RNA sequence: GGGAACGACUCGAGUAGAGUCGAAAACAACUGGAGGCCAUCAACAUGUUCAUCGACGAAGUGGUUCUCGCAGGGAUUCUUACAGUAGGCCUCAUGGUCGCUUUCUUCGGUGGGGUCGGUUACUUCAGCGCACCUUUAAAUUCGUUUAAAGGUGCGCAAAAGAAACAACAACAACAAC
Reactivity to DMS in 0.01 (KOAc 150mM, MgCl2 10mM, bicine 150mM(pH8.5), 24C), signal-to-noise 2, nucleotides 027 to 126: c130a100a150c120u020g000g010a020g000g010c060c000a000u020c050a120a140c270a000u010g010u000u000c170a020u020c040g000a190c120g010a190a260g000u060g000g010u000u060c010u050c000g050c120a040g030g000g000a150u030u000c060u030u070a050c190a160g020u010a100g000g030c010c000u030c010a030u000g000g000u000c060g000c300u000u050u010c030u000u000c010g010g060u010g000g000g000g010u020c010g010g000u000u020a010c050u020u000c070a130
Reactivity to 2A3 in 0.01 (KOAc 150mM, MgCl2 10mM, bicine 150mM(pH8.5), 24C), signal-to-noise 4, nucleotides 027 to 126: c020a010a030c040u030g030g010a000g030g000c060c030a050u140c020a050a070c040a100u220g100u200u090c060a110u130c090g160a070c020g050a100a010g020u000g010g050u300u210c010u020c030g080c020a000g000g040g010a060u090u030c000u040u170a100c040a050g080u120a070g060g010c000c000u060c030a030u070g070g030u030c050g080c100u100u230u060c030u060u040c020g090g010u000g000g030g000g000u020c000g000g010u070u030a040c010u010u080c050a010